[RMDB]
RNA sequence: GGGAACGACUCGAGUAGAGUCGAAAAGGAGGAGGUCUGCCCAAUUUCCCUUAUAUCCCUAACACGGCAGACUUCGAAGGGCCUGAGAAAGGGAAAUUGGUGUUAGGGAUAUGUCUCAGGCCUUAGACUACACCUUUCUAUUCGUAGAAAGGUGUAGAAAAGAAACAACAACAACAAC
Reactivity to DMS in 0.01 (KOAc 150mM, MgCl2 10mM, bicine 150mM(pH8.5), 24C), signal-to-noise 5, nucleotides 027 to 126: g010g010a150g000g000a040g010g000u000c010u000g010c010c010c140a080a260u000u000u000c000c000c000u000u000a130u010a100u000c000c000c000u000a040a050c060a110c140g000g000c010a020g000a020c010u000u000c030g010a110a100g010g000g000c000c000u000g000a020g010a040a120a070g010g010g000a010a030a050u010u010g010g010u000g000u000u000a020g000g000g000a040u000a030u010g000u000c000u000c000a010g000g000c000c010u000u000a030g000a290
Reactivity to 2A3 in 0.01 (KOAc 150mM, MgCl2 10mM, bicine 150mM(pH8.5), 24C), signal-to-noise 2, nucleotides 027 to 126: g070g030a050g020g030a010g000g020u000c000u000g000c010c010c000a010a040u010u010u000c010c000c020u030u100a210u020a020u060c010c000c000u010a020a010c020a000c050g010g000c000a010g000a000c000u010u000c020g060a070a070g020g010g000c020c000u000g000a000g010a030a040a010g030g030g000a020a030a020u060u110g090g000u060g000u010u010a010g010g000g000a010u000a040u070g020u010c000u000c000a000g000g000c010c000u010u010a010g010a010